Structure probing data (2A3 and DMS) for a 177-nucleotide construct. Conditions: 150 mM KOAc, 10 mM MgCl2 and 150 mM bicine (pH 8.5), 24 C.

RNA sequence: GGGAACGACUCGAGUAGAGUCGAAAAGUCUGUAAUCCCAGCACUUUGGGAGGCCGAGGGAGGCAGAUCACUUGAGGUCAGGAGUUUAAGACCAGCCUGGCCAGCAUGUGAAACCCAUCUCUGUUAAGAAACACUUGUGUUUCGACACAAGUGUUUCAAAAGAAACAACAACAACAAC
Reactivity to 2A3 in 0.01 (KOAc 150mM, MgCl2 10mM, bicine 150mM(pH8.5), 24C), signal-to-noise 2, nucleotides 027 to 126: g030u000c020u030g070u030a110a160u020c000c000c010a000g030c030a020c050u150u160u100g120g120g010a130g010g010c030c060g100a130g000g040g000a010g000g060c010a010g000a040u040c010a010c030u040u040g030a010g030g000u000c010a000g000g040a030g010u070u090u130a200a020g070a040c020c010a010g050c000c000u000g010g000c000c000a000g000c000a020u060g010u000g040a070a050a050c000c010c010a150u050c060u050c040u080g120u160u090a120a060
Reactivity to DMS in 0.01 (KOAc 150mM, MgCl2 10mM, bicine 150mM(pH8.5), 24C), signal-to-noise 5, nucleotides 027 to 126: g010u000c030u010g000u010a070a110u000c010c010c000a120g000c080a040c080u010u000u010g010g000g010a120g000g020c040c040g010a100g010g000g010a110g010g000c030a020g000a040u000c020a010c020u000u000g010a260g000g010u000c010a020g000g000a100g000u000u000u010a070a120g010a060c100c070a120g000c000c000u000g000g010c000c010a080g000c030a020u000g000u000g010a050a110a110c010c000c000a080u010c100u000c050u000g010u010u010a100a140
2A3 adducts were read by reverse transcription with SuperScript II with manganese. Values cover nucleotides 27 to 126. The 2A3 profile rests on 3,082 reads. For DMS the reverse transcriptase was MarathonRT.